[RMDB]
RNA sequence: GGGAACGACUCGAGUAGAGUCGAAAAUUGCCGGAUAGAAUGAACUCAUCUUCUUCCGAGCUUUACACUCCUCUUACUAUACCACCAGAGAGCGAUGUUGAACCUGCUGACUGGAAGGAAACGUCGAACGAUGACUUUUAUUCGUAAAAGUCAUCGUAAAAGAAACAACAACAACAAC
Reactivity to 2A3 in 0.01 (KOAc 150mM, MgCl2 10mM, bicine 150mM(pH8.5), 24C), signal-to-noise 4, nucleotides 027 to 126: u040u040g000c000c000g010g010a040u120a260g050a020a090u170g020a130a070c060u060c230a180u010c090u040u000c000u010u000c010c000g010a030g010c000u020u010u030a050c070a020c020u020c020c010u010c030u060u020a070c020u070a070u060a130c010c040a010c000c020a030g030a010g020a010g080c000g040a050u070g090u110u090g060a070a070c010c020u030g040c020u030g140a140c030u050g020g010a080a060g060g000a100a060a010c030g050u040c050g050a030
Reactivity to DMS in 0.01 (KOAc 150mM, MgCl2 10mM, bicine 150mM(pH8.5), 24C), signal-to-noise 5, nucleotides 027 to 126: u000u000g010c020c000g000g000a030u010a010g010a050a020u010g010a060a220c250u010c210a110u000c030u000u000c020u010u010c010c000g000a140g020c010u010u000u000a080c130a110c130u000c010c020u010c110u010u000a080c090u010a160u000a120c060c040a140c060c030a040g010a050g000a050g000c030g010a040u000g000u000u000g010a110a050c070c020u010g010c040u000g010a160c070u010g000g010a100a070g030g010a050a060a080c120g010u010c110g010a090

Notes:
An RNA of 177 nucleotides, treated with 2A3 and DMS and read out base by base. Source: RMDB library OK2TST, as collected in RNAgym. In probing experiments dimethyl sulfate is read out at A N1 and C N3, which are open when not base-paired. For DMS the reverse transcriptase was MarathonRT. 2A3 adducts were read by reverse transcription with SuperScript II with manganese.